Chemical mapping of a 177-nucleotide RNA with DMS and 2A3. For 2A3 the reverse transcriptase was SuperScript II with manganese.
[RMDB]
RNA sequence: GGGAACGACUCGAGUAGAGUCGAAAAGAUAUGGAUGGUUGUUAUGGUCUGACCCAGUGAUGACCUCGGAAACGAGCAAGCUGCAGAACGUCAACCAUCCUAAGUCAAACAGGCCUUCGGGCCUGAAUCCAACACAUAUGUUCGCAUAUGUGUUGGAAAAAGAAACAACAACAACAAC
Reactivity to DMS in 0.01 (KOAc 150mM, MgCl2 10mM, bicine 150mM(pH8.5), 24C), signal-to-noise 6, nucleotides 027 to 126: g010a030u000a300u000g000g000a010u000g000g030u000u000g010u010u010a020u000g000g020u000c010u000g010a200c230c270c070a020g020u000g020a090u000g010a130c300c000u000c000g000g000a130a100a150c010g010a010g000c030a060a130g010c010u000g000c010a030g000a010a010c000g010u000c000a010a000c000c010a010u000c000c000u000a020a050g010u000c030a080a100a300c020a020g000g000c000c010u000u020c140g040g010g010c000c000u000g000a040a100
Reactivity to 2A3 in 0.01 (KOAc 150mM, MgCl2 10mM, bicine 150mM(pH8.5), 24C), signal-to-noise 6, nucleotides 027 to 126: g020a020u050a030u120g010g000a010u000g010g050u020u000g030u160u250a110u160g050g040u000c040u050g150a230c050c080c030a010g000u010g090a300u160g030a060c030c000u000c010g020g030a100a060a040c010g000a000g010c030a090a060g000c000u020g000c010a010g020a070a000c020g000u010c010a000a000c010c000a000u000c000c000u000a030a010g000u010c000a020a040a140c000a010g010g000c000c010u140u270c300g100g010g010c000c000u010g000a000a020

Record summary: The RNA was probed in 150 mM KOAc, 10 mM MgCl2 and 150 mM bicine (pH 8.5) at 24 C.